[RMDB]
RNA sequence: GGGAACGACUCGAGUAGAGUCGAAAACGACGUAGUUUCGACUACGUCGACAGGGAAACGAGCCAAGUGGCGCCGACCACUUAAAAACACCGGAAAUUAAAAGAGCCCGUACUUUCGAGUACGGGAAUUGUAAUGUUCGUUUCGACGAACAUUACAAAAAAGAAACAACAACAACAAC
Reactivity to DMS in 0.01 (KOAc 150mM, MgCl2 10mM, bicine 150mM(pH8.5), 24C), signal-to-noise 1, nucleotides 027 to 126: c060g010a010c000g000u000a020g000u020u000u020c140g010a040c010u000a000c000g010u000c000g010a030c100a050g000g020g000a080a020a130c150g010a090g020c030c070a120a040g010u000g000g000c000g000c010c000g000a120c000c000a000c000u000u000a020a020a010a010a000c130a000c020c000g000g010a040a150a130u000u030a060a080a110a270g000a200g010c000c000c000g000u000a010c010u000u000u020c240g000a060g000u010a010c000g000g010g000a000a000
An RNA of 177 nucleotides, treated with DMS and read out base by base. The reactions ran in a buffer of 150 mM KOAc, 10 mM MgCl2 and 150 mM bicine (pH 8.5), at 24 C.